[RMDB]
RNA sequence: GGGAACGACUCGAGUAGAGUCGAAAAUAAUGCCACUUCGGUGGCAUUAGCAGGUACGAAAGCCCUAUCAAGUACAAAAUCCGAAACAACAAGAUAGGCAAAUAAUGCAUAGCUUCGGCUAUGCAAAGGUACAUCGUUCAUUCGUGAACGAUGUACCAAAAGAAACAACAACAACAAC
Reactivity to 2A3 in 0.01 (KOAc 150mM, MgCl2 10mM, bicine 150mM(pH8.5), 24C), signal-to-noise 1, nucleotides 027 to 126: u040a010a010u010g000c000c000a010c000u000u060c200g080g000u000g040g030c000a000u000u010a000g000c020a030g210g000u070a040c010g140a190a030a000g060c010c000c000u000a010u010c030a120a000g000u030a030c000a040a140a020a180u040c050c050g090a090a000a030c080a040a030c010a080a000g000a030u000a010g000g000c010a020a070a000u200a080a060u100g000c000a000u000a000g000c000u020u010c200g070g000c000u000a000u000g000c000a000a000a000
Reactivity to DMS in 0.01 (KOAc 150mM, MgCl2 10mM, bicine 150mM(pH8.5), 24C), signal-to-noise 2, nucleotides 027 to 126: u000a000a000u010g010c000c000a000c000u020u010c210g030g020u000g000g000c000a010u000u000a030g000c090a050g030g010u000a050c080g000a040a080a120g000c070c000c000u000a000u000c000a070a230g000u000a010c080a030a110a080a040u000c060c050g000a140a030a050c130a040a030c100a220a260g000a000u010a000g000g000c020a140a080a130u010a040a130u040g010c020a030u010a010g000c000u000u020c170g000g000c000u000a000u010g000c000a010a000a020
Chemical mapping of a 177-nucleotide RNA with 2A3 and DMS. DMS adducts were read by reverse transcription with MarathonRT. The reactions ran in a buffer of 150 mM KOAc, 10 mM MgCl2 and 150 mM bicine (pH 8.5), at 24 C. Values cover nucleotides 27 to 126. High DMS reactivity at an A or C suggests that its Watson-Crick edge is free. For DMS, 960 sequencing reads were counted.